[RMDB]
Structure probing data (2A3 and DMS) for a 207-nucleotide construct. The RNA was probed in 150 mM KOAc, 10 mM MgCl2 and 150 mM bicine (pH 8.5) at 24 C. The DMS profile rests on 23,340 reads. For DMS the reverse transcriptase was MarathonRT. Source: RMDB library M2RFPK, as collected in RNAgym.
RNA sequence: GGGAACGACUCGAGUAGAGUCGAAAACUCUUGUUAGGUGAAAGUUGAUGGUCGCCGUGUCAGUCCAUGCCUUUGAAAACAGUUCUAUGUAGUAGGGAGUCGAAAACCUAUGAGAGUUAGAACUUGCUAUGCCUUGGACUCUUCGGAGUCCAAGGAACAUAUUUACCGUCUUCGGACGGUAAAUAUGAAAAGAAACAACAACAACAAC
Reactivity to 2A3 in 0.01 (KOAc 150mM, MgCl2 10mM, bicine 150mM(pH8.5), 24C), signal-to-noise 4, nucleotides 027 to 156: c020u020c010u040u100g030u070u100a080g030g040u060g080a130a100a040g040u060u070g050a070u060g030g010u030c000g000c030c030g040u020g030u030c030a020g030u030c030c020a040u060g040c010c010u140u100u100g140a080a070a010a010c040a030g000u020u010c010u030a040u090g020u030a060g000u000a000g040g020g040a030g060u030c020g080a100a020a050a080c010c000u000a010u040g050a090g000a010g070u040u030a010g000a000a000c000u000u040g000c020u080a070u160g030c000c000u000u000g010g000a010c000u020c010u030u070c230g100g000a000g010u000c000c000a000a000g000g000a000a010
Reactivity to DMS in 0.01 (KOAc 150mM, MgCl2 10mM, bicine 150mM(pH8.5), 24C), signal-to-noise 5, nucleotides 027 to 156: c010u000c040u000u000g020u000u000a060g010g020u000g000a080a060a110g010u000u010g010a110u010g020g030u000c030g010c020c040g020u010g020u000c030a110g030u000c060c040a060u000g010c030c010u010u000u010g000a070a080a070a040c020a050g010u000u000c020u000a040u010g020u000a300g010u010a020g000g010g010a150g020u000c050g000a140a100a130a180c000c010u000a020u000g010a280g000a190g010u000u000a020g010a030a030c030u000u000g030c030u000a110u000g010c000c000u000u000g010g010a030c000u000c010u000u010c290g050g000a020g010u000c000c000a000a000g000g000a000a050